RNA sequence: GGGAACGACUCGAGUAGAGUCGAAAAUGCAUUAAAGAUAAACGCAGAAGAUAAUUUUGCAUUAGCAGCUUAAUUUAGCGCUGCUCAUCCUUCCUCAAUUGCCCACGGUUGAGAGUAAGGGUGUCAUUUAAAAGUGGGGAACCGAGCCUAGCAAAGCCUACUUACCACAGUUCGCUGUGGUAAGUAGAAAAGAAACAACAACAACAAC
Reactivity to 2A3 in 0.01 (KOAc 150mM, MgCl2 10mM, bicine 150mM(pH8.5), 24C), signal-to-noise 2, nucleotides 027 to 156: u050g000c010a020u090u090a100a190a060g110a140u160a040a180a010c110g000c070a040g010a150a010g040a200u080a190a210u110u050u040u050g000c010a020u050u020a000g000c020a010g010c010u080u120a150a050u300u210u180a150g120c070g000c020u000g000c000u000c000a020u010c000c000u000u000c000c020u000c000a000a000u000u020g010c000c020c000a000c000g020g020u000u010g000a020g020a020g020u160a010a000g000g000g010u000g010u000c010a030u020u090u160a120a150a010a010g020u010g000g010g000g000a010a010c080c050g020a010g010c000c010u030a040g000c050a060a030a000g000c010

Chemical mapping of a 207-nucleotide RNA with 2A3.
The RNA was probed in 150 mM KOAc, 10 mM MgCl2 and 150 mM bicine (pH 8.5) at 24 C.
It was measured as part of the RMDB library ARCHII.